[RMDB]
RNA sequence: GGGAACGACUCGAGUAGAGUCGAAAAUGGCGGCUGGUGUGAUUGGUGCUGGCGUGGACCCACUGACCUAUGUUCCUAUUGCCGGACAGGUAGGUAAAGGAGGGAAGCUGGUCAACAAGAUGUUCACCACUUCGGGUGUAUUCGUACACCCGAAGUGAAAAGAAACAACAACAACAAC
Reactivity to 2A3 in 0.01 (KOAc 150mM, MgCl2 10mM, bicine 150mM(pH8.5), 24C), signal-to-noise 4, nucleotides 027 to 126: u080g060g010c000g000g030c000u030g020g050u040g020u060g020a140u040u220g050g040u030g000c030u040g000g010c020g040u040g020g060a130c010c000c000a040c020u020g040a020c010c000u040a060u140g120u050u060c010c010u080a300u080u210g090c100c020g010g020a070c030a030g210g070u120a040g020g000u050a160a060a050g080g020a050g000g000g020a030a020g030c020u050g000g020u040c030a000a030c020a020a040g090a090u150g030u070u070c000a020c040
Reactivity to DMS in 0.01 (KOAc 150mM, MgCl2 10mM, bicine 150mM(pH8.5), 24C), signal-to-noise 2, nucleotides 027 to 126: u000g000g040c040g000g000c050u000g000g000u000g020u000g020a070u030u010g010g010u000g000c020u020g040g000c070g000u000g020g000a180c000c040c000a150c040u000g010a050c020c020u010a060u010g000u000u010c020c030u020a110u030u010g000c100c180g000g020a050c190a020g000g040u000a050g000g020u010a080a090a030g020g000a080g000g000g000a170a050g000c050u030g010g000u020c040a080a150c230a060a090g020a100u010g000u020u010c030a090c160

Structure probing data (2A3 and DMS) for a 177-nucleotide construct. Source: RMDB library OK1LIB, as collected in RNAgym. DMS adducts were read by reverse transcription with MarathonRT.